[RMDB]
RNA sequence: GGGAACGACUCGAGUAGAGUCGAAAAUGUAGUAUCUUGUGGUUAUCACUACAAAGAAUUAGGUUUAGUCAUGAAUAUGGAUGUUAGUCUCCAUAGACAUAGGCUCUCUCUUAAGGAGUUGAUGAUGCGGCAUCCCAGUUCGCUGGGAUGAAAAGAAACAACAACAACAAC
Reactivity to DMS in 0.01 (KOAc 150mM, MgCl2 10mM, bicine 150mM(pH8.5), 24C), signal-to-noise 8, nucleotides 027 to 129: u000g030u000a000g030u000a060u000c050u020u010g050u000g030g030u010u020a120u010c130a080c010u030a060c010a050a060a060g030a100a080u000u040a040g010g020u000u000u000a050g060u000c060a030u020g020a010a130u030a010u000g030g010a050u050g030u020u010a090g030u010c110u030c030c010a030u010a030g020a180c000a050u020a100g030g000c000u000c000u020c060u020c020u000u060a120a120g000g000a120g030u000u000g030a060u000g000a050u040g030c060g000g000
Reactivity to 2A3 in 0.01 (KOAc 150mM, MgCl2 10mM, bicine 150mM(pH8.5), 24C), signal-to-noise 7, nucleotides 027 to 129: u150g040u040a030g020u020a160u070c040u030u080g020u070g070g000u080u100a080u160c070a000c020u030a020c030a030a110a020g060a010a030u110u080a060g100g000u060u040u130a020g010u020c020a030u030g010a010a010u050a030u040g010g020a030u130g110u190u170a110g080u050c020u000c030c010a010u010a000g040a040c030a010u050a070g020g000c000u010c000u010c010u000c000u060u090a060a060g100g020a050g030u040u030g030a070u020g010a020u050g020c020g000g020